About this RNA
This 177-nucleotide RNA was probed chemically with 2A3 and DMS. Conditions: 150 mM KOAc, 10 mM MgCl2 and 150 mM bicine (pH 8.5), 24 C. Values are in units of 0.01, from 0 to 300, in steps of 10.
[RMDB]
RNA sequence: GGGAACGACUCGAGUAGAGUCGAAAAAGCACCUUUAGUAAAAUGUUGAGACAAUUUGCUCUGUAAUGUUUUAACAAUUGUAGGGAGUUUCUCAUCCUCCACAUUGACGAUUCCAGGAUACAAUACACUAGUUUUAGCAUUUCGAUGCUAAAACUAGAAAAGAAACAACAACAACAAC
Reactivity to 2A3 in 0.01 (KOAc 150mM, MgCl2 10mM, bicine 150mM(pH8.5), 24C), signal-to-noise 1, nucleotides 027 to 126: a000g070c030a060c000c000u020u110u070a100g030u070a060a080a050a050u060g000u040u000g000a010g000a010c010a070a080u070u030u240g020c030u040c040u060g050u100a060a030u070g020u000u060u000u100a040a030c060a030a060u150u080g100u060a000g000g040g000a010g010u000u080u000c030u010c000a080u080c000c020u050c020c010a040c020a090u060u080g060a040c060g030a030u020u000c030c010a050g020g020a080u100a150c060a050a090u030a070c040a040
Reactivity to DMS in 0.01 (KOAc 150mM, MgCl2 10mM, bicine 150mM(pH8.5), 24C), signal-to-noise 3, nucleotides 027 to 126: a080g010c080a080c030c010u000u000u000a110g000u000a080a060a070a070u000g000u000u000g000a020g010a040c070a070a100u000u010u000g010c100u010c070u000g020u000a060a050u000g010u000u000u000u010a040a070c040a040a080u010u010g010u000a040g000g010g000a130g010u000u000u010c000u000c050a050u000c070c020u000c030c040a050c090a090u000u000g020a090c130g000a080u000u000c040c030a050g000g010a100u010a040c140a050a070u020a070c250a130
Source: RMDB library OK2TST, as collected in RNAgym. The 2A3 profile rests on 1,110 reads. For DMS the reverse transcriptase was MarathonRT.